[RMDB]
RNA sequence: GGGAACGACUCGAGUAGAGUCGAAAAGGUACGUGAUAGAAUAAUACCUCCUACUAUGAAAUUACCAGAAGGAGUAGUAACUUCAAUAGGUAGUAAUUUGACUAUUACAUGCAGAGUAUCGUUGAGAGCGGGAAUAGGGUUUCGACCCUAUUCCCGCAAAAGAAACAACAACAACAAC
Reactivity to 2A3 in 0.01 (KOAc 150mM, MgCl2 10mM, bicine 150mM(pH8.5), 24C), signal-to-noise 1, nucleotides 027 to 126: g000g070u120a040c030g000u000g040a000u000a000g000a120a000u000a080a000u070a000c000c000u060c000c000u010a000c110u080a170u300g000a030a030a060u050u000a000c000c000a000g060a050a210g130g160a050g010u110a000g000u000a000a000c000u000u000c000a110a220u000a080g000g030u000a000g000u000a180a300u000u000u160g010a080c000u050a050u080u050a050c070a080u090g000c000a040g050a000g150u070a130u030c050g000u090u190g050a090g000a000
Source: RMDB library OK1LIB, as collected in RNAgym. The record gives the reactivity of an RNA of 177 nucleotides to 2A3.